Structure probing data (2A3 and DMS) for a 177-nucleotide construct. The RNA was probed in 150 mM KOAc, 10 mM MgCl2 and 150 mM bicine (pH 8.5) at 24 C. The data come from the RNA Mapping Database (RMDB), library OK2TST. For 2A3 the reverse transcriptase was SuperScript II with manganese. For 2A3, 3,692 sequencing reads were counted. 2A3 is a SHAPE reagent: it acylates the 2'-hydroxyl of flexible nucleotides of all four kinds.
RNA sequence: GGGAACGACUCGAGUAGAGUCGAAAAGGUGCACUAUAUUGUUAGGUUUGUGGGUGUGCUGACAUUCCAAAGUAGGCACCAAGAUCCUAGGUUGAUCAAAAAACUACUUGUAAGUAAGCAAACCGAAACGUGUAUCUCAUUUCGAUGAGAUACACGUAAAAGAAACAACAACAACAAC
Reactivity to 2A3 in 0.01 (KOAc 150mM, MgCl2 10mM, bicine 150mM(pH8.5), 24C), signal-to-noise 3, nucleotides 027 to 126: g010g000u030g020c010a010c070u040a030u040a070u300u160g120u150u090a050g020g020u000u020u020g040u040g040g020g000u030g000u020g040c040u020g000a020c030a080u080u000c000c000a020a010a000g010u000a020g000g040c130a020c060c000a040a020g000a030u030c000c020u060a130g220g010u100u160g020a010u040c040a000a010a040a070a040a000c010u010a000c000u020u030g090u140a050a080g040u030a060a040g020c000a030a000a000c000c010g040a050a090
Reactivity to DMS in 0.01 (KOAc 150mM, MgCl2 10mM, bicine 150mM(pH8.5), 24C), signal-to-noise 4, nucleotides 027 to 126: g020g010u000g010c010a120c100u010a100u010a100u020u000g010u000u010a110g010g000u000u000u000g000u000g010g010g010u010g010u000g000c060u000g000a070c120a130u000u010c020c020a080a030a090g030u000a000g010g010c110a050c060c090a080a150g000a020u000c000c010u000a140g020g000u000u010g030a030u020c020a000a070a100a050a040a120c020u000a010c010u000u000g000u010a060a100g010u000a050a130g010c010a010a010a020c000c020g000a070a120